[RMDB]
RNA sequence: GGGAACGACUCGAGUAGAGUCGAAAACACAUUCUAUUCGUAGAAUGUGGAACGUAGAGAGAUCGACUGCGUCGCAGCUAUGUCGAACGAGGAAGAGCGCGCAGGGAUCGGGCUUCGGCCCGAUCAACUAAAAAAAUUGUUUCGACAAUUUUUUUAGAAAAGAAACAACAACAACAAC
Reactivity to DMS in 0.01 (KOAc 150mM, MgCl2 10mM, bicine 150mM(pH8.5), 24C), signal-to-noise 4, nucleotides 027 to 126: c000a000c000a010u010u000c000u000a020u000u000c160g020u000a020g010a020a000u000g000u000g010g000a090a080c110g000u000a050g010a110g000a130g000a110u000c050g010a130c010u000g000c010g010u010c080g020c040a080g010c070u000a050u010g020u010c050g010a080a090c110g010a090g010g000a080a060g010a120g010c000g010c030g010c030a050g010g000g020a000u000c020g020g000g010c000u010u010c200g020g010c000c000c000g000a000u000c010a060a140
Reactivity to 2A3 in 0.01 (KOAc 150mM, MgCl2 10mM, bicine 150mM(pH8.5), 24C), signal-to-noise 2, nucleotides 027 to 126: c000a000c000a000u000u000c000u000a050u070u080c100g080u020a000g000a010a010u020g000u000g010g010a090a020c070g060u220a050g020a030g000a000g030a190u090c100g070a080c030u010g020c030g130u260c130g010c070a170g040c040u140a080u280g130u110c060g100a180a140c090g050a110g060g000a100a010g010a030g060c000g010c020g000c000a010g060g080g040a030u020c000g000g000g000c010u050u050c290g100g020c000c000c000g000a000u000c000a000a010
An RNA of 177 nucleotides, treated with DMS and 2A3 and read out base by base.
The 2A3 profile rests on 1,644 reads.
Source: RMDB library M2PK50, as collected in RNAgym.
For DMS the reverse transcriptase was MarathonRT.
Conditions: 150 mM KOAc, 10 mM MgCl2 and 150 mM bicine (pH 8.5), 24 C.